Structure probing data (DMS and 2A3) for a 177-nucleotide construct. DMS (dimethyl sulfate) methylates the pairing face of unpaired adenines and cytosines. 2A3 adducts were read by reverse transcription with SuperScript II with manganese. It was measured as part of the RMDB library M2PK50. The DMS profile rests on 5,555 reads. Conditions: 150 mM KOAc, 10 mM MgCl2 and 150 mM bicine (pH 8.5), 24 C.
[RMDB]
RNA sequence: GGGAACGACUCGAGUAGAGUCGAAAAAACAGCUGCUUCGGCAGCUGUUAACGCUCGCGGCUCGAGGCUGCACGAGCCGGUCAGCAGCCAGUCCGCGAGCUAUAGCCUUGGAGUUCGCUCCAAGGAACGAAUUAUAGAACUUCGGUUCUAUAAUUCGAAAAGAAACAACAACAACAAC
Reactivity to DMS in 0.01 (KOAc 150mM, MgCl2 10mM, bicine 150mM(pH8.5), 24C), signal-to-noise 4, nucleotides 027 to 126: a030a010c010a000g020c000u000g010c000u000u010c210g030g000c000a010g010c000u000g000u000u000a030a070c180g010c000u000c000g020c010g000g000c120u010c040g010a090g010g000c000u000g020c020a080c070g010a120g000c140c080g020g000u000c080a150g010c010a010g010c000c000a140g000u000c000c010g000c010g000a000g000c020u000a010u000a100g010c000c000u000u010g000g000a020g010u000u000c180g010c000u000c000c010a010a000g010g000a030a060
Reactivity to 2A3 in 0.01 (KOAc 150mM, MgCl2 10mM, bicine 150mM(pH8.5), 24C), signal-to-noise 3, nucleotides 027 to 126: a010a000c000a010g000c010u010g020c010u050u090c160g120g010c010a000g010c000u010g000u000u000a000a000c020g000c000u000c000g010c010g010g000c040u020c040g070a100g010g010c000u000g000c020a040c140g060a080g150c090c020g070g050u090c030a030g000c000a000g000c000c000a000g020u010c010c000g000c000g000a000g000c000u010a010u010a010g000c010c000u000u000g000g000a010g010u050u110c120g080c090u000c000c000a000a000g010g000a000a020